[RMDB]
RNA sequence: GGGAACGACUCGAGUAGAGUCGAAAACACAGCAUCGACUGGGUCUCCAUGCUCAACGUUACCAUGCAGAAAGCGUACAAGUGCUCUGACUACUUUCCCAAUAUCGAGAUCAGGAUGGUCUGCGGUCGCUUCUGUUGCACCAUAAUAUACGACAAGGUAUCGAUUGGUUGUUCGCAACCAAUCGAUAAAAAGAAACAACAACAACAAC
Reactivity to 2A3 in 0.01 (KOAc 150mM, MgCl2 10mM, bicine 150mM(pH8.5), 24C), signal-to-noise 1, nucleotides 027 to 156: c060a000c030a000g040c000a080u050c040g150a070c050u040g100g000g000u020c020u020c000c010a030u080g000c020u020c050a000a110c020g030u040u030a040c020c000a070u140g010c020a020g040a140a090a010g060c000g040u100a050c040a200a080g040u010g140c010u040c020u050g010a060c020u070a030c020u040u070u000c000c030c000a030a070u140a100u120c080g050a030g000a100u050c010a010g150g000a090u130g000g030u000c030u060g080c030g060g000u050c030g000c010u010u000c000u110g050u040u030g020c020a030c000c010a020u040a170a150u110a060u040a090c070g050a030c030a040a060g070g020
Reactivity to DMS in 0.01 (KOAc 150mM, MgCl2 10mM, bicine 150mM(pH8.5), 24C), signal-to-noise 1, nucleotides 027 to 156: c020a060c050a050g010c040a100u010c040g030a100c060u010g030g000g060u000c040u000c060c060a130u010g000c020u000c010a110a060c070g000u000u000a130c070c010a120u000g000c060a100g000a030a140a100g000c040g000u000a070c060a090a100g000u000g010c060u000c060u020g000a070c030u000a070c050u010u000u010c010c000c000a060a220u020a120u010c070g020a090g010a090u000c020a110g020g010a180u010g030g000u000c010u000g050c060g030g030u000c000g020c040u000u000c060u010g020u000u010g000c020a150c060c020a060u010a050a140u020a090u020a060c070g020a130c050a070a070g010g000
Structure probing data (2A3 and DMS) for a 207-nucleotide construct. For DMS, 1,870 sequencing reads were counted. For 2A3, 1,054 sequencing reads were counted. For DMS the reverse transcriptase was MarathonRT. The RNA was probed in 150 mM KOAc, 10 mM MgCl2 and 150 mM bicine (pH 8.5) at 24 C. It was measured as part of the RMDB library OK3TST.